[RMDB]
Structure probing data (2A3 and DMS) for a 207-nucleotide construct. It was measured as part of the RMDB library OK3TST.
RNA sequence: GGGAACGACUCGAGUAGAGUCGAAAACGGAGACCAAACGACAACGAACCUCCUAGGAGCAUCAUGAAUGAUACCUACAAGGCAACUAUAGACAAACUACUCGGUGAUAUGGAGCAGCAAGGGUUACUCGAGAGAGACUCGCUGAUGUUACCCAAUGACCGAAAGGAUAGUUCGCUAUCCUUUCGGUAAAAGAAACAACAACAACAAC
Reactivity to 2A3 in 0.01 (KOAc 150mM, MgCl2 10mM, bicine 150mM(pH8.5), 24C), signal-to-noise 4, nucleotides 027 to 156: c050g020g000a040g070a080c030c060a120a050a050c090g130a060c050a110a030c080g030a030a050c010c050u030c020c020u060a030g020g020a050g080c030a050u060c020a030u100g140a130a060u080g030a080u070a110c000c010u020a050c050a080a040g080g000c020a060a030c040u080a020u090a160g020a050c020a000a140a030c010u050a030c000u020c020g010g040u030g020a030u020a040u210g090g030a060g030c000a000g030c030a060a230g040g000g010u070u090a080c010u020c040g060a070g000a000g000a010g000a070c020u000c030g000c010u030g000a040u090g020u060u020a060c020c000c010a010a060u170g040
Reactivity to DMS in 0.01 (KOAc 150mM, MgCl2 10mM, bicine 150mM(pH8.5), 24C), signal-to-noise 2, nucleotides 027 to 156: c030g010g040a090g020a130c040c050a050a100a140c050g000a130c080a090a110c060g030a080a070c040c010u020c030c050u000a060g010g000a080g040c040a050u000c030a130u020g020a120a120u000g010a120u000a120c030c050u010a040c030a030a050g030g030c030a050a110c060u010a070u010a100g020a070c040a070a060a130c010u000a040c030u000c000g020g010u000g030a150u000a090u000g000g030a040g020c000a030g030c040a070a040g010g010g020u020u010a050c020u000c050g010a100g000a210g010a120g000a050c010u000c030g060c030u020g030a060u000g000u000u000a100c000c010c000a060a150u010g010